[RMDB]
RNA sequence: GGGAACGACUCGAGUAGAGUCGAAAACAGUGCCCCCAGUUGCAUAGCUCUGGGAGAUGACAUCCACCUUGAAUCUCCACAUUGGAACCUCUAGGGCUAUUACUUAGCGUCCAGUGUGAUGUUACCACCUGUAGUUGCACAAGGGGCCCUGGAUGAACCACUAUGGAUAUUUCGAUAUCCAUAGUGGAAAAGAAACAACAACAACAAC
Reactivity to 2A3 in 0.01 (KOAc 150mM, MgCl2 10mM, bicine 150mM(pH8.5), 24C), signal-to-noise 3, nucleotides 027 to 156: c010a010g000u010g040c010c000c010c010c000a010g010u180u030g010c030a050u070a140g030c010u020c040u030g010g020g000a120g000a130u060g010a010c020a030u010c010c020a060c060c000u090u090g080a110a060u080c050u000c100c020a060c010a080u040u110g020g020a060a120c020c040u060c040u050a030g010g030g000c020u050a060u020u110a040c030u010u040a000g030c020g040u000c020c020a030g000u020g010u010g080a020u030g000u050u050a030c020c030a040c020c000u000g050u090a020g020u060u040g000c000a010c020a050a060g000g000g000g000c000c000c000u010g020g010a020u100g070a060a060
Reactivity to DMS in 0.01 (KOAc 150mM, MgCl2 10mM, bicine 150mM(pH8.5), 24C), signal-to-noise 2, nucleotides 027 to 156: c000a090g020u000g010c000c000c000c000c000a150g070u000u010g010c020a090u010a110g000c020u000c020u020g010g030g000a090g020a020u000g010a060c040a050u000c050c040a100c050c070u000u030g020a110a130u010c020u000c030c020a040c120a170u000u010g020g000a040a080c060c010u000c060u000a070g060g020g000c020u000a070u000u010a070c040u000u010a040g000c280g050u010c030c020a040g020u000g020u010g010a100u000g000u000u000a050c030c030a060c030c030u010g010u010a070g040u010u000g040c020a100c030a150a050g010g060g040g000c020c070c010u010g020g000a130u000g020a180a200

This 207-nucleotide RNA was probed chemically with 2A3 and DMS. It was measured as part of the RMDB library OK3TST. Conditions: 150 mM KOAc, 10 mM MgCl2 and 150 mM bicine (pH 8.5), 24 C.